[RMDB]
RNA sequence: GGGAACGACUCGAGUAGAGUCGAAAAGCAACACGAUGGCGAAACGACUGGUGGUUGUACAAUUGAUAGAUUUCUAUAUUAUCAUGAUCAGUGGCCAUGACGAUGCGGAUCUAUAAGCAAAAUACUAUCAUGUCUUACUUAUUUUUUGACGUGGCUACCACCGAGCAUCGUUCGCGAUGCUCGGUGGAAAAGAAACAACAACAACAAC
Reactivity to 2A3 in 0.01 (KOAc 150mM, MgCl2 10mM, bicine 150mM(pH8.5), 24C), signal-to-noise 1, nucleotides 027 to 156: g040c040a000a120c020a010c060g050a040u070g020g000c070g000a010a070a070c120g000a030c010u060g000g000u000g010g010u030u090g070u040a130c080a010a080u020u020g000a000u010a010g000a080u050u090u030c060u060a120u070a060u300u000a050u120c110a040u060g040a030u080c020a020g060u060g060g020c000c000a020u050g020a040c020g020a010u050g040c020g000g000a000u110c090u150a100u200a250a160g040c020a020a060a000a030u120a150c010u030a040u110c000a020u010g010u000c000u110u030a040c000u100u100a100u150u110u070u000u010u060g000a000c010g000u030g030g000c000u030a030